Structure probing data (2A3 and DMS) for a 177-nucleotide construct. 2A3 adducts were read by reverse transcription with SuperScript II with manganese. Reactivities are rounded to 0.1 and cut off at 0 and 3. Conditions: 150 mM KOAc, 10 mM MgCl2 and 150 mM bicine (pH 8.5), 24 C. The data come from the RNA Mapping Database (RMDB), library OK2TRN.

RNA sequence: GGGAACGACUCGAGUAGAGUCGAAAAGGAUCCUAUCUCGUGGUAACUGGCUGUACAUCAGUUACCAGUGAGUAGGUAUUCACUAUGUGUCAAUGAUGUACAGGUUGACAUAUAGCAGAUAGGAUCGCUACUGGUUACUAUUCGUAGUAACCAGUAGAAAAGAAACAACAACAACAAC
Reactivity to 2A3 in 0.01 (KOAc 150mM, MgCl2 10mM, bicine 150mM(pH8.5), 24C), signal-to-noise 9, nucleotides 027 to 126: g030g000a000u010c000c000u000a000u000c010u010c020g030u020g010g000u010a010a000c000u000g050g000c030u080g090u240a030c020a080u030c000a020g010u000u000a000c000c000a000g000u010g000a010g030u080a150g070g200u110a090u030u040c000a000c000u010a010u030g020u000g000u000c010a010a010u050g090a100u130g110u240a110c040a060g150g080u000u010g000a000c000a010u010a000u000a010g000c010a000g000a000u000a000g000g000a000u000c000g000
Reactivity to DMS in 0.01 (KOAc 150mM, MgCl2 10mM, bicine 150mM(pH8.5), 24C), signal-to-noise 9, nucleotides 027 to 126: g010g010a010u000c000c000u000a010u000c000u000c060g020u000g000g010u000a010a010c010u000g000g010c120u010g010u010a100c190a140u000c000a010g000u000u000a010c000c010a060g000u000g000a020g020u000a100g010g020u010a030u000u000c010a050c000u000a010u000g020u000g000u000c010a020a020u000g000a110u000g010u010a090c130a070g010g010u000u000g000a020c010a010u000a010u000a020g010c060a010g000a020u000a010g010g000a020u000c000g000